[RMDB]
RNA sequence: GGGAACGACUCGAGUAGAGUCGAAAAAUAUCAUUGAGAAUGGCGUGACAUUAGACAUAGAAGGAGUCGUAGAUUUUGGUACAAAAGUCGUGCCAGAAUUAGAUGUGGAUGGUAGGUUAAUUAGGUAAACAGAUCGUCAUUUCGAUGACGAUCUGUUAAAAGAAACAACAACAACAAC
Reactivity to DMS in 0.01 (KOAc 150mM, MgCl2 10mM, bicine 150mM(pH8.5), 24C), signal-to-noise 1, nucleotides 027 to 126: a130u020a120u000c010a120u030u010g000a070g030a090a050u010g000g000c080g070u000g000a030c080a090u000u000a070g000a010c050a030u020a080g020a080a060g020g000a110g020u000c010g010u000a070g000a110u000u000u000u000g020g000u000a020c030a090a060a110a070g050u000c120g000u010g000c000c000a000g000a030a010u000u000a050g030a030u000g020u010g000g010a090u000g050g010u000a060g000g000u040u010a050a130u020u010a070g020g030u000a080